Notes
An RNA of 177 nucleotides, treated with DMS and 2A3 and read out base by base. Conditions: 150 mM KOAc, 10 mM MgCl2 and 150 mM bicine (pH 8.5), 24 C. In probing experiments dimethyl sulfate is read out at A N1 and C N3, which are open when not base-paired.
[RMDB]
RNA sequence: GGGAACGACUCGAGUAGAGUCGAAAAGAUAUGGAUCCGUGGUGGCGACGAAGUACCUCGGAAACGAGGUACAGAGCCAUCCACCGGAUCCUAAGUCAAAACCUGGAGCUCUUCGGAGCUCCAGGAACAGUACAGAGUAGUUCGCUACUCUGUACUGAAAAGAAACAACAACAACAAC
Reactivity to DMS in 0.01 (KOAc 150mM, MgCl2 10mM, bicine 150mM(pH8.5), 24C), signal-to-noise 5, nucleotides 027 to 126: g000a030u000a300u000g010g000a000u000c000c010g020u000g000g040u000g000g010c050g010a150c270g000a140a160g010u000a000c000c000u000c010g010g000a060a060a150c000g020a010g000g010u000a010c000a020g000a210g010c010c000a000u010c010c010a020c120c060g040g000a000u000c010c000u010a010a080g000u010c050a120a080a110a150c000c000u000g000g000a010g010c000u000c000u000u020c240g020g000a010g000c000u000c000c000a000g000g000a030a060
Reactivity to 2A3 in 0.01 (KOAc 150mM, MgCl2 10mM, bicine 150mM(pH8.5), 24C), signal-to-noise 4, nucleotides 027 to 126: g020a010u080a050u140g000g000a000u000c010c020g020u030g000g010u010g000g050c030g020a300c050g020a300a030g020u020a000c000c010u020c010g000g060a030a050a010c010g000a000g000g020u000a000c010a010g000a000g000c020c000a020u080c010c020a020c030c010g020g000a000u000c000c000u010a030a020g030u000c020a050a050a110a240c000c000u010g000g010a010g010c010u010c050u170u290c300g080g000a000g000c000u010c010c000a010g000g000a000a000